[RMDB]
RNA sequence: GGGAACGACUCGAGUAGAGUCGAAAAGAUAUGGACACUCUCCGUUUACAUCGAUCUCGGAAACGAGGGAGUAGAUGGGAGAGGUGUCCUAAGUCAAAACGUUUAGAUACUUCGGUAUCUAAACGAAUCAACUCGCUAUCUUCGGAUAGCGAGUUGAAAAAGAAACAACAACAACAAC
Reactivity to 2A3 in 0.01 (KOAc 150mM, MgCl2 10mM, bicine 150mM(pH8.5), 24C), signal-to-noise 1, nucleotides 027 to 126: g000a010u050a030u100g000g000a000c000a000c020u000c000u000c020c020g000u000u100u050a160c140a260u300c060g090a090u000c000u000c030g000g060a100a060a050c000g010a010g010g000g030a020g010u070a020g020a020u190g260g020g010a020g030a020g030g000u010g010u000c000c000u000a050a000g090u030c040a020a000a040a130c000g000u010u000u000a000g000a020u010a000c040u090u070c300g130g030u020a010u030c000u000a000a000a000c000g020a020a100
Reactivity to DMS in 0.01 (KOAc 150mM, MgCl2 10mM, bicine 150mM(pH8.5), 24C), signal-to-noise 1, nucleotides 027 to 126: g000a060u000a300u010g010g000a010c010a030c000u000c000u030c000c010g020u000u020u000a030c010a240u000c110g000a050u010c000u000c000g010g000a160a080a110c000g000a010g000g020g010a050g020u000a000g000a020u000g030g030g030a050g000a010g020g020u000g020u000c000c000u000a040a060g030u000c050a020a040a100a140c030g000u000u000u000a000g000a030u000a000c000u000u020c190g030g010u000a000u000c000u000a000a010a000c000g020a040a100

Chemical mapping of a 177-nucleotide RNA with 2A3 and DMS.
The reactions ran in a buffer of 150 mM KOAc, 10 mM MgCl2 and 150 mM bicine (pH 8.5), at 24 C.
The data come from the RNA Mapping Database (RMDB), library TTRDEL.